An RNA of 177 nucleotides, treated with 2A3 and read out base by base. For 2A3, 2,202 sequencing reads were counted. Source: RMDB library OK1LIB, as collected in RNAgym. The RNA was probed in 150 mM KOAc, 10 mM MgCl2 and 150 mM bicine (pH 8.5) at 24 C.

RNA sequence: GGGAACGACUCGAGUAGAGUCGAAAAUUACCUGGUGCUAUAUUGAUGGUUGUACUCAAUCCAAUUGCAGGACGUCAUUUAGAUAAAUAUGGACCUCAUGCUCUAUCAAUAUUAGGAACAGGAUGUUGAUGAGUACGUACUUCGGUACGUACUCAUCAAAAGAAACAACAACAACAAC
Reactivity to 2A3 in 0.01 (KOAc 150mM, MgCl2 10mM, bicine 150mM(pH8.5), 24C), signal-to-noise 4, nucleotides 027 to 126: u140u050a130c000c000u010g020g080u110g040c010u020a030u010a020u010u000g030a000u040g000g090u160u050g040u080a130c040u040c200a070a090u100c050c070a090a070u090u170g040c060a090g040g030a040c080g040u020c030a030u000u040u130a200g060a270u210a190a120a000u120a110u120g050g020a010c000c010u030c010a000u030g010c000u000c000u050a020u000c000a010a000u000a090u130u160a010g020g010a060a010c000a010g070g040a040u160g050u070u020